[RMDB]
An RNA of 207 nucleotides, treated with DMS and 2A3 and read out base by base.
DMS adducts were read by reverse transcription with MarathonRT.
It was measured as part of the RMDB library RNAMAK.
RNA sequence: GGGAACGACUCGAGUAGAGUCGAAAAGUCUGCUUCGGCAGACAGCUGCGAUAUGGAUCUGAUCUAGCUCUUGGAUUUAUACUACGCAUCGGAAACGAUGAAAGUAUUGUCAGAGCUAGCGUAGAUCCUAAGUCUUUAUUAAGUGUUCGCACUUAAAUUCUGGUGAUUAUUUCGAUAAUCACCAGAAAAAAGAAACAACAACAACAAC
Reactivity to DMS in 0.01 (KOAc 150mM, MgCl2 10mM, bicine 150mM(pH8.5), 24C), signal-to-noise 2, nucleotides 027 to 156: g040u000c000u010g000c000u010u000c300g070g050c010a010g040a000c030a150g010c030u000g010c030g000a120u000a180u020g000g010a030u000c040u000g030a090u000c000u000a030g000c000u010c010u000u000g040g000a020u010u010u000a020u000a040c020u000a140c240g010c010a020u000c010g020g000a150a120a300c010g020a020u000g010a050a040a050g030u000a000u000u000g030u000c000a050g000a050g040c000u000a010g000c090g000u000a040g030a000u010c010c000u010a030a170g000u000c010u000u000u000a230u070u000a030a020g020u010g000u000u000c250g010c010a030c020u000u000a010a070a300
Reactivity to 2A3 in 0.01 (KOAc 150mM, MgCl2 10mM, bicine 150mM(pH8.5), 24C), signal-to-noise 3, nucleotides 027 to 156: g000u000c000u000g000c020u060u130c280g140g000c010a000g020a020c000a010g060c090u220g050c030g070a100u050a090u270g010g000a000u000c010u030g030a010u040c000u010a000g000c000u000c000u010u180g150g000a040u130u300u030a010u040a000c000u030a020c270g030c020a000u010c010g000g060a060a100a070c010g000a010u010g000a060a030a000g000u000a000u020u030g030u000c000a000g000a000g020c010u000a000g020c000g000u010a000g000a010u000c000c000u000a010a000g000u010c010u050u140u060a200u070u110a050a000g000u000g030u060u110c190g050c080a020c020u000u060a040a130a180